Structure probing data (2A3) for a 207-nucleotide construct. 2A3 adducts were read by reverse transcription with SuperScript II with manganese. The RNA was probed in 150 mM KOAc, 10 mM MgCl2 and 150 mM bicine (pH 8.5) at 24 C. The data come from the RNA Mapping Database (RMDB), library M2RFPK. The 2A3 profile rests on 532 reads.
RNA sequence: GGGAACGACUCGAGUAGAGUCGAAAAAUUCUGUGCAUAAAAGUCGAAAGUAUUGCUAUAGUUAAGGUUGCGCUUGCCUAUUUAGGCAUACUUCUCAGGAUGGCGCGUUGCAGUCCAACAAGAUCCAAAAACAACGGCCACUUCGGUGGCCGUUGAACUUCCUUAAAUAGUUCGCUAUUUAAGGAAGAAAAGAAACAACAACAACAAC
Reactivity to 2A3 in 0.01 (KOAc 150mM, MgCl2 10mM, bicine 150mM(pH8.5), 24C), signal-to-noise 1, nucleotides 027 to 156: a000u150u060c030u030g030u060g000c010a040u060a240a190a050a040g010u140c030g030a070a020a040g020u060a070u110u160g020c030u050a010u090a130g030u040u050a110a050g000g010u020u050g040c020g010c030u030u030g010c000c000u070a150u070u090u170a070g000g000c000a000u020a000c000u060u030c060u020c140a000g000g080a060u050g000g040c030g000c000g060u030u070g050c010a010g050u000c050c010a010a020c040a110a050g050a160u070c040c060a000a000a000a080a110c000a000a000c010g000g180c000c010a010c010u130u140c150g040g000u000g030g120c130c010g000u010u000g000a000a000